[RMDB]
RNA sequence: GGGAACGACUCGAGUAGAGUCGAAAAGCACGUCGUUACGACGACGUGCAAGAAAACAAAAGGAGUGGCGAUGCCUGGCCACAGUGAAACAAACAGGCAAAAAGCAUGGUGGUACGCCACCAUGCAAAAUGGACGCAUAGUUCGCUAUGCGUCCAUUAAAAGAAACAACAACAACAAC
Reactivity to 2A3 in 0.01 (KOAc 150mM, MgCl2 10mM, bicine 150mM(pH8.5), 24C), signal-to-noise 2, nucleotides 027 to 126: g000c020a000c000g000u000c000g000u020u080a110c300g030a030c000g000a000c000g070u010g000c000a000a000g000a000a050a000a000c060a000a110a100a060g160g090a180g020u000g000g030c050g050a140u060g010c000c010u000g000g000c010c000a010c020a020g080u150g050a090a080a000c060a050a050a010c000a000g000g000c020a000a010a010a010a010g000c000a000u010g000g030u020g020g000u010a030c180g020c000c000a000c000c000a000u000g000c000a000a000
Reactivity to DMS in 0.01 (KOAc 150mM, MgCl2 10mM, bicine 150mM(pH8.5), 24C), signal-to-noise 1, nucleotides 027 to 126: g000c070a000c000g020u000c010g040u000u000a130c070g020a030c030g020a000c000g160u040g000c080a020a000g000a120a190a130a080c120a140a050a110a300g010g010a150g000u000g000g070c000g000a020u000g020c000c000u050g000g000c000c000a000c000a140g000u000g060a040a060a040c190a030a000a040c000a010g020g040c010a010a060a040a080a050g010c000a000u000g000g010u000g010g010u030a020c220g060c000c000a000c000c000a020u000g000c000a010a010